[RMDB]
RNA sequence: GGGAACGACUCGAGUAGAGUCGAAAAUGAGGUUGAUUGCGCGCGCGAGUGUCAUUGAACUUCUUUCCGUCCAUGCGUGAGAGUGACGACUUUACCGAAGCGCCAUUCGCGCCAACGGUCCAUCCAAAGUAGUGCUCCAGUUCGCUGGAGCACUACUAAAAGAAACAACAACAACAAC
Reactivity to 2A3 in 0.01 (KOAc 150mM, MgCl2 10mM, bicine 150mM(pH8.5), 24C), signal-to-noise 2, nucleotides 027 to 126: u100g000a070g100g060u040u040g080a120u030u060g000c000g000c000g040c000g000c040g060a040g040u020g050u040c070a130u040u100g110a050a110c000u070u020c000u110u070u010c020c000g010u040c060c070a130u120g010c010g050u070g040a020g030a020g070u000g060a040c060g030a050c000u110u080u070a130c030c140g070a070a000g000c020g000c010c050a020u060u090c020g000c000g000c020c000a000a020c040g020g000u000c000c000a010u000c030c020a120a000
Reactivity to DMS in 0.01 (KOAc 150mM, MgCl2 10mM, bicine 150mM(pH8.5), 24C), signal-to-noise 1, nucleotides 027 to 126: u120g030a080g000g000u030u000g000a210u000u000g000c220g000c120g000c070g130c160g010a040g000u020g000u040c000a000u040u000g000a010a020c000u000u000c030u000u000u060c100c020g000u010c020c070a090u030g000c090g040u000g000a140g070a170g060u020g060a130c000g000a080c090u000u000u150a120c000c010g070a060a180g000c040g000c030c000a070u000u000c000g000c000g030c060c180a200a100c020g000g020u000c000c070a040u000c000c010a050a080